[RMDB]
RNA sequence: GGGAACGACUCGAGUAGAGUCGAAAAGCUGGGCUGUUUGAGGCGUGGGGUUCGUCCUUGCGUUUUGUAUGCAGCCUCGUGUAUCGAAAGGGAAUCAGGUUAAUAUUCCUGAACCGAGACGUGGAUAUAUUGCACCAGUUUUCGAACUGGUGCAAUAAAAAGAAACAACAACAACAAC
Reactivity to 2A3 in 0.01 (KOAc 150mM, MgCl2 10mM, bicine 150mM(pH8.5), 24C), signal-to-noise 3, nucleotides 027 to 126: g000c020u010g000g000g010c000u000g100u020u030u180g040a020g000g020c000g000u030g000g000g010g010u030u120c210g010u270c020c000u000u000g000c000g000u000u000u040u030g130u040a300u110g000c000a000g000c000c020u000c010g000u020g000u020a040u010c010g020a040a040a040g080g040g090a040a160u020c000a000g050g000u050u110a140a040u100a170u170u090c000c000u000g020a020a030c010c010g010a000g000a010c020g030u060g040g010a020u090a050
Reactivity to DMS in 0.01 (KOAc 150mM, MgCl2 10mM, bicine 150mM(pH8.5), 24C), signal-to-noise 3, nucleotides 027 to 126: g030c020u010g010g000g000c000u010g010u000u010u010g000a010g010g000c000g030u000g000g000g010g010u000u030c260g000u020c000c010u000u010g000c010g000u000u000u000u000g010u010a050u020g010c000a020g000c000c000u010c300g010u010g020u010a170u000c020g000a030a120a190g000g010g000a080a080u000c050a060g000g000u000u010a100a120u020a110u010u010c000c000u000g000a020a090c050c020g000a070g000a110c030g020u000g000g000a140u010a120
An RNA of 177 nucleotides, treated with 2A3 and DMS and read out base by base.
Conditions: 150 mM KOAc, 10 mM MgCl2 and 150 mM bicine (pH 8.5), 24 C.
2A3 adducts were read by reverse transcription with SuperScript II with manganese.